[RMDB]
Structure probing data (2A3 and DMS) for a 177-nucleotide construct. The RNA was probed in 150 mM KOAc, 10 mM MgCl2 and 150 mM bicine (pH 8.5) at 24 C. Source: RMDB library M2PK50, as collected in RNAgym. The DMS profile rests on 1,465 reads.
RNA sequence: GGGAACGACUCGAGUAGAGUCGAAAAACACCGAUCUUCGGAUCGGUGUAAAUAAAUUCAGCGGUUUAAAUUUCGAGCGCAUUACCGCUGAUGCGCUCGAAAAAACAGUUAGGUUCGCCUAACUGAACUGUAGUACGUUGUUCGCAACGUACUACAGAAAAGAAACAACAACAACAAC
Reactivity to 2A3 in 0.01 (KOAc 150mM, MgCl2 10mM, bicine 150mM(pH8.5), 24C), signal-to-noise 1, nucleotides 027 to 126: a000c000a020c000c020g020a000u000c000u030u080c220g110g000a000u000c000g030g000u010g000u000a030a020a000u020a010a000a000u100u090c030a030g070c020g060g140u000u220u300a090a260a110u090u150u020c020g000a000g030c020g030c030a010u000u030a040c000c010g010c000u010g000a010u010g000c040g050c010u000c010g000a000a000a000a000a000a000c020a000g000u000u000a000g040g060u040u080c240g060c060c000u010a000a010c000u000g000a020a020
Reactivity to DMS in 0.01 (KOAc 150mM, MgCl2 10mM, bicine 150mM(pH8.5), 24C), signal-to-noise 1, nucleotides 027 to 126: a090c000a010c000c000g010a000u000c000u000u010c140g010g000a000u010c000g040g020u000g010u000a000a050a070u010a080a060a100u010u020c010a020g030c050g000g020u010u010u010a030a160a130u010u000u000c020g010a030g000c010g000c000a010u000u000a040c060c020g000c020u000g010a010u010g000c000g000c010u000c010g000a000a000a030a070a050a090c010a000g000u000u000a010g000g000u000u010c270g020c000c000u000a010a000c000u000g000a050a100